[RMDB]
RNA sequence: GGGAACGACUCGAGUAGAGUCGAAAAGCGAGUUCUGGUAGAAAACUCGCCUGACGAGACGGUCUGGAUCGCCCGGCCUGAUCAGCGACGGCUUUGGAACGGCGGCGCACUCACGACCGCGAGUGCGGUACGUGGCGGUGUUCGCACCGCCACGUACAAAAGAAACAACAACAACAAC
Reactivity to 2A3 in 0.01 (KOAc 150mM, MgCl2 10mM, bicine 150mM(pH8.5), 24C), signal-to-noise 1, nucleotides 027 to 126: g000c000g020a020g060u030u050c050u130g150g040u140a020g090a080a160a020a070c020u040c010g000c000c010u060g010a050c090g030a010g020a050c020g040g030u020c030u100g070g040a170u140c110g190c010c020c040g010g050c000c020u070g020a070u110c060a000g090c010g090a100c030g060g080c000u160u060u240g050g030a080a000c000g030g000c020g010g000c020g000c020a040c010u020c010a020c040g030a040c000c000g010c030g010a040g030u160g020c000g000
Reactivity to DMS in 0.01 (KOAc 150mM, MgCl2 10mM, bicine 150mM(pH8.5), 24C), signal-to-noise 1, nucleotides 027 to 126: g010c000g040a020g000u000u000c050u010g040g020u000a090g000a080a170a030a020c000u000c000g000c020c100u040g030a130c070g010a100g000a200c120g000g000u010c020u000g020g000a090u000c150g010c100c080c040g040g030c020c020u000g000a080u020c120a060g000c100g000a170c140g000g000c040u000u020u000g000g010a080a070c160g020g030c010g000g040c010g020c000a010c030u000c000a020c080g000a100c060c030g020c020g010a040g020u030g000c020g010
An RNA of 177 nucleotides, treated with 2A3 and DMS and read out base by base. The data come from the RNA Mapping Database (RMDB), library OK2TST. The RNA was probed in 150 mM KOAc, 10 mM MgCl2 and 150 mM bicine (pH 8.5) at 24 C. The DMS profile rests on 923 reads. DMS adducts were read by reverse transcription with MarathonRT. For 2A3, 912 sequencing reads were counted.